[RMDB]
RNA sequence: GGGAACGACUCGAGUAGAGUCGAAAAGAAGAGGACAAAAGUCCGAAACAGUAUUAGUCUUUAUUUCUAGCUGAAAGUGUGAAGUCAGAAGAAGUUUCUUCGGACUGAACCAAACACGAUCAACAAAGACAUAAACAAACUUCGGUUUGUUUAUGUCAAAAGAAACAACAACAACAAC
Reactivity to DMS in 0.01 (KOAc 150mM, MgCl2 10mM, bicine 150mM(pH8.5), 24C), signal-to-noise 5, nucleotides 027 to 126: g020a070a100g010a270g020g010a010c010a070a110a150a180g010u010c020c010g010a120a090a080c080a090g030u000a080u010u010a090g000u000c040u010u000u000a070u020u000u010c010u000a090g010c050u000g020a020a060a250g000u000g000u000g000a140a060g010u000c000a030g000a040a040g010a030a220g020u010u000u000c010u000u000c010g000g000a070c010u000g000a060a100c190c150a070a150a020c020a020c010g000a300u000c010a010a020c050a100a080a110
Reactivity to 2A3 in 0.01 (KOAc 150mM, MgCl2 10mM, bicine 150mM(pH8.5), 24C), signal-to-noise 4, nucleotides 027 to 126: g040a020a000g050a040g000g010a000c030a030a300a110a040g020u000c000c000g000a020a060a000c020a010g120u120a140u230u140a050g040u010c010u020u180u030a190u040u140u010c030u030a050g000c030u020g030a050a040a020g030u030g010u010g060a030a030g010u000c010a010g000a020a020g020a080a080g100u060u220u040c000u010u000c010g020g000a020c010u010g010a050a040c050c000a040a080a000c010a000c000g030a070u020c020a000a060c030a030a100a010